The record gives the reactivity of an RNA of 170 nucleotides to 2A3 and DMS. The RNA was probed in 150 mM KOAc, 10 mM MgCl2 and 150 mM bicine (pH 8.5) at 24 C. Values cover nucleotides 27 to 129. For 2A3 the reverse transcriptase was SuperScript II with manganese. For DMS, 6,954 sequencing reads were counted. DMS adducts were read by reverse transcription with MarathonRT.
[RMDB]
RNA sequence: GGGAACGACUCGAGUAGAGUCGAAAACCUUUAAGAAAGUUGCAACCAUACCGUAUAAGGUUUGCAACUCUGUUAAGGAUACUCUGGCUUAUUAUGCUCACAGCGUGUUGUACAGAGUUUUUCCUUAUAAGUGCCCACUUCGGUGGGCACAAAAGAAACAACAACAACAAC
Reactivity to 2A3 in 0.01 (KOAc 150mM, MgCl2 10mM, bicine 150mM(pH8.5), 24C), signal-to-noise 2, nucleotides 027 to 129: c000c000u000u040u030a070a000g050a040a080a000g000u000u010g000c000a000a090c000c010a060u140a080c000c080g090u110a180u080a200a060g000g010u000u030u120g000c010a000a000c000u000c050u020g140u000u030a000a040g000g000a010u000a000c000u000c000u000g000g000c000u000u100a040u190u000a000u160g020c000u140c070a170c010a110g000c040g060u050g060u040u050g000u010a160c000a000g000a000g000u000u060u000u040u000c030c000u010u000a000u000a040a060
Reactivity to DMS in 0.01 (KOAc 150mM, MgCl2 10mM, bicine 150mM(pH8.5), 24C), signal-to-noise 3, nucleotides 027 to 129: c050c030u000u020u060a130a130g000a030a070a060g020u060u000g070c010a000a000c060c030a120u000a130c210c180g000u060a300u020a080a080g020g010u070u030u090g050c000a010a080c000u030c000u010g050u010u030a010a020g060g020a060u020a080c000u010c000u000g000g060c000u000u000a050u000u170a050u030g000c060u070c120a170c300a020g000c030g010u050g000u070u000g000u050a150c010a010g030a000g010u000u010u130u000u000c010c040u020u050a090u000a090a030